Source: RMDB library OK1LIB, as collected in RNAgym. This 177-nucleotide RNA was probed chemically with 2A3 and DMS. Conditions: 150 mM KOAc, 10 mM MgCl2 and 150 mM bicine (pH 8.5), 24 C.

RNA sequence: GGGAACGACUCGAGUAGAGUCGAAAAGAAAGUAGCGAAAAGGCUCAUACCGCGAAAGUAUGCUUACUAACCGGUAAGGAAGAUAGGCCGAACUAUCAAGCUACGACGGGAAAAGAACCGUAGAAAAGGGAAUACAUGUCUUCGGACAUGUAUUCCCAAAAGAAACAACAACAACAAC
Reactivity to 2A3 in 0.01 (KOAc 150mM, MgCl2 10mM, bicine 150mM(pH8.5), 24C), signal-to-noise 1, nucleotides 027 to 126: g210a000a190a000g000u000a000g000c020g030a010a000a000a120g010g000c000u000c090a020u000a000c130c000g130c010g150a000a180a000g000u000a000u190g220c180u080u000a000c010u000a040a050c000c090g000g060u000a030a030g040g000a090a100g000a140u200a000g090g000c000c000g040a130a000c010u010a000u120c000a050a040g120c000u000a000c000g000a000c000g000g000g100a000a190a000a000g000a000a140c000c000g000u020a010g120a000a120a000a000
Reactivity to DMS in 0.01 (KOAc 150mM, MgCl2 10mM, bicine 150mM(pH8.5), 24C), signal-to-noise 2, nucleotides 027 to 126: g030a020a040a160g070u020a000g020c030g020a050a070a080a200g000g050c020u000c000a120u060a050c000c020g010c100g000a110a070a030g000u000a000u000g000c120u030u000a000c000u000a100a300c300c070g000g020u000a000a120g000g000a060a080g000a060u080a050g030g000c080c120g060a030a150c110u030a010u040c160a170a190g000c000u000a000c000g000a030c010g010g000g000a180a020a060a130g000a080a170c000c010g000u000a020g060a120a000a050a090